[RMDB]
RNA sequence: GGGAACGACUCGAGUAGAGUCGAAAAUUUUGCUGGCGGGAUGCUGGCCAUUCUAACGCCGACGAGCGGCCUGCCUUCAAGGCCUUUCAUCGACUUUUUCCUUAAGACGCCGCCUCCUGUUGCAGGAGACCGCUCUAGUUUUCGAACUAGAGCGGUCAAAAGAAACAACAACAACAAC
Reactivity to 2A3 in 0.01 (KOAc 150mM, MgCl2 10mM, bicine 150mM(pH8.5), 24C), signal-to-noise 3, nucleotides 027 to 126: u070u060u020u050g030c010u020g090g000c010g000g050g030a060u040g010c040u080g050g000c010c020a090u120u080c060u090a080a020c090g020c030c030g000a040c050g020a020g040c010g000g000c000c000u020g010c020c050u150u190c080a020a030g020g000c000c000u010u050u010c010a040u030c000g040a030c020u070u060u030u120u110c020c000u070u070a050a010g070a020c020g010c010c000g000c000c010u010c000c010u040g030u060u090g020c060a000g000g060a040
Reactivity to DMS in 0.01 (KOAc 150mM, MgCl2 10mM, bicine 150mM(pH8.5), 24C), signal-to-noise 1, nucleotides 027 to 126: u030u080u000u000g000c040u000g070g070c030g010g000g000a100u020g030c000u010g080g000c030c200a060u000u000c100u010a080a070c130g000c000c000g020a040c160g010a060g000c130g010g030c000c010u030g000c090c090u050u010c100a070a020g040g000c020c000u000u000u000c040a020u000c050g000a060c020u000u000u020u020u000c010c020u000u000a100a050g000a070c180g020c000c070g010c050c000u000c040c000u000g040u000u000g000c000a080g000g000a270